The data come from the RNA Mapping Database (RMDB), library OK2TST. An RNA of 177 nucleotides, treated with DMS and 2A3 and read out base by base. For 2A3, 1,237 sequencing reads were counted. Reactivities are given for positions 27 through 126. For DMS the reverse transcriptase was MarathonRT.
RNA sequence: GGGAACGACUCGAGUAGAGUCGAAAAGCAGACCUCUGCUUGCUAUCUUUGGUGUAUAAUGAUGCACCGACGUUGUCUGCGACUAUUGAGGAACUCAGGGAUAGCAAAGAUUUUCUAGAGGCUAUCGCCUGUAGCUAGGAUUCGUCCUAGCUACAGGAAAAGAAACAACAACAACAAC
Reactivity to DMS in 0.01 (KOAc 150mM, MgCl2 10mM, bicine 150mM(pH8.5), 24C), signal-to-noise 5, nucleotides 027 to 126: g010c030a040g000a090c040c100u020c030u010g020c050u000u000g010c020u000a010u000c010u010u000u000g010g010u010g020u000a040u000a140a150u010g000a270u000g000c010a010c000c020g020a080c150g010u000u000g010u010c020u000g000c020g010a090c050u000a140u000u010g010a060g010g000a130a140c050u000c020a040g000g000g000a010u000a010g000c000a020a070a100g000a190u010u000u000u010c090u000a080g010a070g010g010c080u010a060u000c100g010
Reactivity to 2A3 in 0.01 (KOAc 150mM, MgCl2 10mM, bicine 150mM(pH8.5), 24C), signal-to-noise 2, nucleotides 027 to 126: g090c000a020g060a180c010c060u110c100u110g030c040u020u040g040c010u030a030u000c010u030u080u120g070g020u020g090u000a080u060a120a300u260g240a050u070g030c000a000c000c000g020a030c070g060u150u120g030u100c080u090g040c000g050a040c040u100a100u130u130g050a030g080g060a170a070c010u020c060a000g080g010g010a000u000a000g000c000a020a060a010g000a030u140u180u130u100c110u160a010g030a050g060g020c050u200a120u300c120g010